Chemical mapping of a 177-nucleotide RNA with DMS and 2A3.

RNA sequence: GGGAACGACUCGAGUAGAGUCGAAAAGAUAUGGAUCGUGAACUACCCAAGGUCUAUGAAGAGAAUCGGAAACGAUUCUUGGAGACCGACGGCACGAUCCUAAGUCAAACCUCAGUUCGCUGAGGAAGACAUCUUUUCUGUUCGCAGAAAAGAUGUCAAAAGAAACAACAACAACAAC
Reactivity to DMS in 0.01 (KOAc 150mM, MgCl2 10mM, bicine 150mM(pH8.5), 24C), signal-to-noise 3, nucleotides 027 to 126: g010a080u020a300u000g000g000a000u000c000g030u000g000a070a080c060u020a300c030c020c010a030a300g000g000u000c000u000a100u010g000a260a120g000a010g000a010a010u000c000g000g010a100a060a120c010g020a000u000u000c000u000u000g000g000a010g000a010c000c000g010a280c300g000g000c010a000c010g000a000u010c000c000u000a020a060g000u010c030a080a070a160c010c000u010c000a010g000u000u020c300g000c010u000g000a010g000g000a090a050
Reactivity to 2A3 in 0.01 (KOAc 150mM, MgCl2 10mM, bicine 150mM(pH8.5), 24C), signal-to-noise 3, nucleotides 027 to 126: g030a010u050a030u180g000g010a000u000c000g010u010g020a080a090c080u200a100c280c030c000a060a030g010g000u000c010u060a300u210g030a040a020g010a000g000a000a000u000c010g020g010a080a050a040c010g000a010u000u000c000u000u000g000g000a000g010a000c000c000g000a010c010g010g010c000a000c000g000a000u000c020c000u010a050a030g010u000c020a090a060a160c000c000u010c000a020g040u090u130c300g000c150u010g000a000g010g030a010a030
2A3 adducts were read by reverse transcription with SuperScript II with manganese.
It was measured as part of the RMDB library TTRDEL.
DMS adducts were read by reverse transcription with MarathonRT.
Reactivities are given for positions 27 through 126.